The record gives the reactivity of an RNA of 207 nucleotides to DMS and 2A3. Source: RMDB library RNAMAK, as collected in RNAgym. The 2A3 profile rests on 5,552 reads.

RNA sequence: GGGAACGACUCGAGUAGAGUCGAAAACUUCGAGUUCGCUCGAAGAAAAAAGCGUACUACUUUCGAGGGUCCCACCGACGAUCAGCUCCCAAAUAGGAGCUGGGAGGUGUGACCUACCCACCGAAAGUAUCGCAAAAAACCGAGCUUCGGCUCGGAACAAUGAUAGAUGGUUCGCCAUCUAUCAUUGAAAAGAAACAACAACAACAAC
Reactivity to DMS in 0.01 (KOAc 150mM, MgCl2 10mM, bicine 150mM(pH8.5), 24C), signal-to-noise 2, nucleotides 027 to 156: c020u000u000c000g010a020g040u000u010c300g050c010u000c010g040a040a030g000a020a020a040a120a060a160g020c010g010u010a070c120u010a020c010u000u000u000c010g020a140g000g000g010u000c010c030c000a010c020c020g020a100c090g000a080u000c000a030g030c000u000c010c000c000a050a190a200u000a070g010g000a000g050c030u000g000g000g010a040g030g030u000g000u010g000a030c010c000u000a000c010c000c020a300c140c000g010a020a020a010g000u000a030u000c000g020c020a000a070a110a100a050a110c010c000g000a020g000c010u000u000c300g050g010c000u000c010g030g010a050a080
Reactivity to 2A3 in 0.01 (KOAc 150mM, MgCl2 10mM, bicine 150mM(pH8.5), 24C), signal-to-noise 4, nucleotides 027 to 156: c000u010u000c010g010a010g020u100u100c140g090c070u010c010g000a010a000g030a090a070a000a000a000a000g040c050g030u100a100c030u000a000c000u050u000u010c010g000a020g000g030g000u010c130c090c000a000c000c020g300a300c010g000a010u000c000a000g010c000u020c000c020c020a150a300a070u220a120g000g000a000g000c000u000g000g010g010a010g000g000u010g000u020g010a000c000c000u020a050c020c020c010a050c020c020g000a000a000a000g000u000a030u300c090g000c000a050a080a030a060a020a000c010c000g000a010g000c010u080u160c280g120g000c010u000c000g000g000a000a010
The RNA was probed in 150 mM KOAc, 10 mM MgCl2 and 150 mM bicine (pH 8.5) at 24 C.